[RMDB]
RNA sequence: GGGAACGACUCGAGUAGAGUCGAAAAACACCAGUGUUACAUCACUUAGGUGAUCAGUGCAGAGCUAUGUCACAAUACCCCCGUAAGCAGAGCCUAGACAAGAGUUACAUCACCUGGUUGAUCAGUGUCCCGUGCUAGUAUUCGUACUAGCACGGGAAAAAGAAACAACAACAACAAC
Reactivity to DMS in 0.01 (KOAc 150mM, MgCl2 10mM, bicine 150mM(pH8.5), 24C), signal-to-noise 2, nucleotides 027 to 126: a090c120a120c020c030a050g020u000g010u010u030a050c180a130u010c000a010c030u000u000a100g010g040u000g000a030u020c120a020g030u000g030c120a080g030a050g010c020u000a050u020g000u000c110a030c250a070a060u010a300c080c030c020c000c030g010u010a040a130g000c030a170g000a060g010c020c060u000a110g010a210c020a040a090g030a060g000u000u020a060c200a040u000c070a020c080c030u010g000g000u000u000g000a040u000c160a080g020u030g020

Source: RMDB library OK2TRN, as collected in RNAgym. This 177-nucleotide RNA was probed chemically with DMS. The DMS profile rests on 886 reads. Conditions: 150 mM KOAc, 10 mM MgCl2 and 150 mM bicine (pH 8.5), 24 C.